[RMDB]
This 177-nucleotide RNA was probed chemically with DMS and 2A3. The DMS profile rests on 1,272 reads. Source: RMDB library OK2TRN, as collected in RNAgym.
RNA sequence: GGGAACGACUCGAGUAGAGUCGAAAACAUCCACUGCUACGGCAGUGGAUGAACGAGGUAGGUACGCCUACCUCGAAAGUCGGAUGUCGGCAUAGACAUUAAACGUCCAUGGUACGCCAUGGACGAACAUGGAUCACCGUUUCGACGGUGAUCCAUGAAAAGAAACAACAACAACAAC
Reactivity to DMS in 0.01 (KOAc 150mM, MgCl2 10mM, bicine 150mM(pH8.5), 24C), signal-to-noise 2, nucleotides 027 to 126: c010a040u010c000c000a020c020u020g030c000u020a090c290g060g010c020a020g050u000g000g000a020u000g020a020a080c120g080a000g000g010u030a000g000g030u010a100c300g040c000c000u010a000c000c000u010c000g000a010a040a080g020u030c090g000g010a020u000g010u010c000g000g000c200a140u000a120g000a000c010a010u000u000a040a150a190c010g000u000c000c000a020u000g000g010u010a140c260g040c000c000a030u000g000g010a000c000g010a010a030
Reactivity to 2A3 in 0.01 (KOAc 150mM, MgCl2 10mM, bicine 150mM(pH8.5), 24C), signal-to-noise 2, nucleotides 027 to 126: c000a010u020c000c000a000c000u000g010c000u000a070c180g140g000c000a000g000u010g010g000a000u010g000a010a020c000g000a010g000g000u010a000g000g020u040a010c220g080c060c000u010a000c000c010u000c000g010a020a010a010g080u080c040g080g030a030u040g020u030c010g000g000c150a150u100a070g010a020c010a020u000u130a110a180a020c020g000u000c010c000a020u010g000g000u040a040c250g040c040c010a000u010g020g010a000c000g000a000a000